The record gives the reactivity of an RNA of 177 nucleotides to 2A3 and DMS.
The RNA was probed in 150 mM KOAc, 10 mM MgCl2 and 150 mM bicine (pH 8.5) at 24 C.
For DMS the reverse transcriptase was MarathonRT.
The DMS profile rests on 1,828 reads.
RNA sequence: GGGAACGACUCGAGUAGAGUCGAAAAGAGAUACCGCCGUGCAGUAAGGGACACGGUCAAAGAACCUUACAGGUAGCAAAGACCGUGAGGUAGCGUACAAUGCACGGCUGUACGUUACCUAAGAGAAGCUAGAGAACAGCUUCGGCUGUUCUCUAGCAAAAGAAACAACAACAACAAC
Reactivity to 2A3 in 0.01 (KOAc 150mM, MgCl2 10mM, bicine 150mM(pH8.5), 24C), signal-to-noise 2, nucleotides 027 to 126: g100a000g060a030u140a070c000c000g000c000c000g000u000g020c000a130g110u220a190a180g020g000g070a000c010a010c000g050g020u000c000a000a000a020g060a010a020c000c000u050u020a100c090a040g010g050u010a050g050c080a030a090a000g010a030c020c020g040u090g000a000g020g000u030a010g000c000g000u010a000c000a000a000u060g000c000a010c010g000g000c000u000g000u000a000c000g000u000u000a020c000c010u010a000a000g050a000g000a050a020
Reactivity to DMS in 0.01 (KOAc 150mM, MgCl2 10mM, bicine 150mM(pH8.5), 24C), signal-to-noise 1, nucleotides 027 to 126: g000a050g000a090u030a030c000c030g000c000c000g090u000g000c020a230g020u030a000a160g000g000g000a160c000a020c000g010g070u030c010a040a130a160g000a070a050c000c030u060u080a030c160a010g000g000u000a050g000c020a070a220a080g000a040c000c010g060u010g000a000g040g000u000a010g000c000g010u000a000c000a000a120u000g000c000a030c020g000g010c000u000g040u000a000c040g000u000u000a010c010c000u010a130a120g000a070g030a060a100